RNA sequence: GGGAACGACUCGAGUAGAGUCGAAAACGAUAUUUCAUACCACAAGAAUGUGGCGCUCCGCGGUUGGUGAGCAUGCUCGGUCCGUCCGAGAAGCCUUAAAACUGCGACGACACAUUCACCUUGAACCAAAGAUGCCAGUUUUCGAACUGGCAUCUUUAAAAGAAACAACAACAACAAC
Reactivity to DMS in 0.01 (KOAc 150mM, MgCl2 10mM, bicine 150mM(pH8.5), 24C), signal-to-noise 1, nucleotides 027 to 126: c190g020a050u030a050u000u010u030c080a120u000a140c070c040a210c260a150a060g000a020a000u000g050u000g000g030c010g000c130u000c080c000g000c000g000g030u010u020g000g010u000g000a040g030c020a010u070g000c010u000c010g000g000u000c300c300g000u040c010c000g010a000g000a010a070g020c040c010u000u000a110a150a000a010c050u010g020c000g000a080c000g000a000c000a000c000a000u000u000c010a070c090c050u000u000g000a060a060c290c160
Reactivity to 2A3 in 0.01 (KOAc 150mM, MgCl2 10mM, bicine 150mM(pH8.5), 24C), signal-to-noise 2, nucleotides 027 to 126: c040g050a040u050a100u110u250u050c070a080u120a130c010c000a070c040a150a050g000a010a000u010g010u000g010g010c010g020c030u140c070c010g000c000g000g020u040u000g010g080u110g000a140g000c030a000u270g030c000u000c010g000g020u010c080c240g090u080c010c000g020a000g000a000a000g000c000c000u140u190a050a060a000a030c000u000g010c010g300a230c010g000a000c010a000c000a000u000u000c000a010c010c000u000u090g090a030a020c090c020

Source information
Chemical mapping of a 177-nucleotide RNA with DMS and 2A3. The reactions ran in a buffer of 150 mM KOAc, 10 mM MgCl2 and 150 mM bicine (pH 8.5), at 24 C. The 2A3 profile rests on 1,404 reads. DMS adducts were read by reverse transcription with MarathonRT. 2A3 adducts were read by reverse transcription with SuperScript II with manganese. The DMS profile rests on 1,422 reads.